[RMDB]
RNA sequence: GGGAACGACUCGAGUAGAGUCGAAAACAGCAGUCUGGCGGCGGUUAGAUAGACAAGGUUAACAGCUAGAAUAAUUCAUUUAAGAUGGCACACUUCAAGCGUGAAAGAUCGCUGACAAAAGUGCCCGAAACCGUUAUGUGUUCGCACAUAACGGUUUAAAAGAAACAACAACAACAAC
Reactivity to DMS in 0.01 (KOAc 150mM, MgCl2 10mM, bicine 150mM(pH8.5), 24C), signal-to-noise 5, nucleotides 027 to 126: c070a120g020c100a050g000u010c030u000g000g000c020g010g010c030g000g010u000u000a040g000a070u010a080g020a150c190a110a080g000g020u010u010a050a080c080a050g000c050u000a060g010a110a120u030a060a110u020u030c110a120u030u000u000a060a060g010a100u020g000g010c010a050c020a070c190u000u000c220a030a040g020c010g000u000g000a080a140a180g010a130u030c010g030c010u000g010a120c300a030a020a080a080g010u000g000c020c000c170g010
Reactivity to 2A3 in 0.01 (KOAc 150mM, MgCl2 10mM, bicine 150mM(pH8.5), 24C), signal-to-noise 2, nucleotides 027 to 126: c020a010g110c100a020g020u000c010u000g000g000c000g010g020c020g000g000u000u000a090g000a080u070a040g080a060c020a040a050g080g000u190u140a080a040c020a060g000c000u040a040g070a010a050u100a190a060u080u110c110a060u050u030u140a110a010g000a020u110g000g000c060a000c000a000c020u050u000c040a010a000g000c000g000u020g080a070a040a000g210a000u300c000g000c000u000g000a000c020a000a100a000a030g000u000g000c080c000c020g020